The record gives the reactivity of an RNA of 177 nucleotides to DMS and 2A3.
DMS (dimethyl sulfate) methylates the pairing face of unpaired adenines and cytosines.
For 2A3, 53,772 sequencing reads were counted.
For 2A3 the reverse transcriptase was SuperScript II with manganese.
2A3 is a SHAPE reagent: it acylates the 2'-hydroxyl of flexible nucleotides of all four kinds.
Source: RMDB library OK1LIB, as collected in RNAgym.
Values are in units of 0.01, from 0 to 300, in steps of 10.

RNA sequence: GGGAACGACUCGAGUAGAGUCGAAAAGCUCUGCGAGACAGAUCGAACAACAAAGAGAGAUCGAAAAUCUUAGAGGAGAGAACGAAUCUGUCGACUUCACUAGGACAUUGUGGAUCAGAGGUCCAAAGACCAUUCAUUGGUUCGCCGAUGGAUGGUCAAAAGAAACAACAACAACAAC
Reactivity to DMS in 0.01 (KOAc 150mM, MgCl2 10mM, bicine 150mM(pH8.5), 24C), signal-to-noise 9, nucleotides 027 to 126: g010c020u000c010u000g010c270g010a300g010a010c030a030g000a020u000c010g000a200a200c060a070a120c130a030a190a170g010a080g000a170g000a060u010c110g010a100a100a100a120u000c000u000u010a010g010a300g010g000a120g000a120g000a100a110c010g000a060a080u010c060u010g010u010c020g000a190c080u010u010c010a040c010u010a040g000g000a050c110a070u020u010g010u010g000g000a100u020c030a020g000a030g000g000u020c020c030a050a070a070
Reactivity to 2A3 in 0.01 (KOAc 150mM, MgCl2 10mM, bicine 150mM(pH8.5), 24C), signal-to-noise 9, nucleotides 027 to 126: g020c000u000c000u000g050c050g030a060g010a030c010a010g010a010u010c020g050a060a050c040a040a020c020a020a210a010g080a000g010a000g010a030u060c060g070a070a040a040a060u000c010u020u040a040g010a020g070g040a040g010a010g020a080a020c010g020a050a130u040c030u050g040u020c010g030a040c020u020u020c000a000c010u030a030g020g090a040c040a150u070u120g010u010g010g000a010u050c010a010g010a010g020g040u000c000c000a040a010a010